[RMDB]
RNA sequence: GGGAACGACUCGAGUAGAGUCGAAAAGAGAAGUCAUCGACUCAGUCAUCUUUUCCUCCACUGGAGUUGAUGGCACAGAUGUUGCGGCUGACCUACUAAACUCAUACCACUACAUGCAGUAUUUUAGCGCUCUAGCGCAGUUCGCUGCGCUAGAGCGAAAAGAAACAACAACAACAAC
Reactivity to 2A3 in 0.01 (KOAc 150mM, MgCl2 10mM, bicine 150mM(pH8.5), 24C), signal-to-noise 3, nucleotides 027 to 126: g060a000g020a130a010g000u030c010a030u120c130g030a010c040u040c060a010g110u020c030a090u090c190u030u100u020u010c010c040u050c030c010a050c010u070g150g040a020g030u030u060g010a010u040g000g020c010a020c050a040g120a060u090g040u120u110g020c010g040g010c020u040g100a160c010c010u010a010c040u030a020a080a070c060u050c160a040u060a070c010c030a020c030u060a020c020a060u080g020c020a030g060u060a180u040u060u040u090a040g050